[RMDB]
RNA sequence: GGGAACGACUCGAGUAGAGUCGAAAAAGAAACUUGAGGAAGGCUGUCCCUAGUACGAGAGGACCGGGACGGACGAACCUCUGGUGUGCCAGUUGUUCCGCCAGGAGCACUGCUGGUUAGCUACGUUUCAAAAGAUAAACUUCGGUUUAUCUUUUGAAAAAGAAACAACAACAACAAC
Reactivity to DMS in 0.01 (KOAc 150mM, MgCl2 10mM, bicine 150mM(pH8.5), 24C), signal-to-noise 3, nucleotides 027 to 126: a050g000a090a080a040c050u000u000g000a000g000g000a150a290g000g000c000u000g000u000c000c000c000u000a070g010u000a170c010g000a260g010a230g000g000a090c260c230g000g010g010a010c000g010g000a040c000g010a120a180c010c010u000c010u000g000g020u000g010u000g020c010c010a010g000u010u010g010u000u000c010c000g000c160c250a120g000g000a000g000c010a000c300u000g000c010u000g000g000u000u010a190g010c110u010a110c230g000u000u000
Reactivity to 2A3 in 0.01 (KOAc 150mM, MgCl2 10mM, bicine 150mM(pH8.5), 24C), signal-to-noise 2, nucleotides 027 to 126: a000g110a030a100a010c030u050u060g000a000g000g000a020a040g070g010c000u010g010u000c000c010c000u010a020g010u010a010c020g000a010g010a030g110g020a010c040c010g000g000g000a010c000g000g010a020c010g030a050a210c000c010u010c020u020g010g020u060g040u060g000c020c010a010g020u040u020g000u030u020c030c010g110c120c090a080g020g000a000g010c000a010c070u060g000c000u010g000g020u050u070a020g030c030u080a050c070g040u000u000